This 177-nucleotide RNA was probed chemically with 2A3 and DMS.
RNA sequence: GGGAACGACUCGAGUAGAGUCGAAAAGACGGAAAAGAUCGAACCUAAGAAGAUCAGGGAGUGUUAGCCGAAUCCUAGGGCUCCUAGGGACGCAUCGUCCGAUGCGAAAUAAACACUAACGUCGAAACAUCGGCAUAUCCUUCGGGAUAUGCCGAUGAAAAGAAACAACAACAACAAC
Reactivity to 2A3 in 0.01 (KOAc 150mM, MgCl2 10mM, bicine 150mM(pH8.5), 24C), signal-to-noise 1, nucleotides 027 to 126: g000a000c010g010g020a300a200a000a100g020a000u040c100g000a210a000c000c030u140a140a090g140a170a000g000a120u000c120a050g000g100g000a060g000u030g000u120u000a000g050c230c080g010a080a000u000c000c000u000a000g040g190g000c110u020c000c000u000a000g080g000g000a080c000g040c080a000u000c030g260u080c000c230g000a000u000g000c000g000a000a150a150u250a000a010a000c000a000c000u060a140a000c000g040u030c000g020a180a000a000
Reactivity to DMS in 0.01 (KOAc 150mM, MgCl2 10mM, bicine 150mM(pH8.5), 24C), signal-to-noise 1, nucleotides 027 to 126: g010a110c000g020g000a030a090a060a170g000a030u000c000g000a060a180c160c160u060a050a070g040a070a100g000a000u000c040a120g050g000g010a080g050u000g000u000u030a000g010c290c050g000a110a070u000c060c000u010a000g000g000g000c110u020c010c000u000a070g000g030g050a110c000g000c000a030u000c000g000u000c300c050g020a000u000g000c000g000a020a130a070u000a070a060a010c020a020c000u000a060a120c000g070u030c010g000a150a120a060